[RMDB]
RNA sequence: GGGAACGACUCGAGUAGAGUCGAAAAAUCAGGCGGUUUGAGAAAUAUUCAAUUCUCAGCAGAAGCCAGAAUUUGAAUUCCCUCAUCUUUUAGGAAUCAUUUACCAGGUUUGGAGAGGAUUCAGACACAAAAUACCACACUUCGGUGUGGUAUUUUGAAAAGAAACAACAACAACAAC
Reactivity to 2A3 in 0.01 (KOAc 150mM, MgCl2 10mM, bicine 150mM(pH8.5), 24C), signal-to-noise 4, nucleotides 027 to 126: a000u040c020a020g000g010c030g020g040u100u290u190g040a010g050a000a040a020u290a160u180u140c050a100a150u000u000c020u000c010a000g000c000a000g080a110a000g000c020c010a000g070a040a060u090u020u020g050a030a020u010u020c000c000c000u020c010a130u020c020u040u200u060u120a070g080g020a010a010u050c020a110u000u050u200a290c020c010a180g240g060u130u200u150g080g000a080g000a020g030g020a020u000u000c010a040g060a090c080a010
Reactivity to DMS in 0.01 (KOAc 150mM, MgCl2 10mM, bicine 150mM(pH8.5), 24C), signal-to-noise 3, nucleotides 027 to 126: a030u000c020a060g000g010c010g010g010u010u010u010g010a010g000a010a030a070u030a110u070u080c220a130a070u010u000c010u010c000a000g000c020a080g020a090a170g010c000c000a080g010a050a040u000u000u000g000a080a180u010u000c000c000c000u010c160a070u030c020u000u000u020u030a090g020g010a040a030u020c020a060u020u010u020a150c020c020a050g020g010u010u070u020g010g010a140g000a060g010g010a020u000u000c000a070g010a160c250a260

Source: RMDB libraries RFM100 and RFMREP, as collected in RNAgym. Chemical mapping of a 177-nucleotide RNA with 2A3 and DMS. The reactions ran in a buffer of 150 mM KOAc, 10 mM MgCl2 and 150 mM bicine (pH 8.5), at 24 C. Values cover nucleotides 27 to 126. DMS adducts were read by reverse transcription with MarathonRT.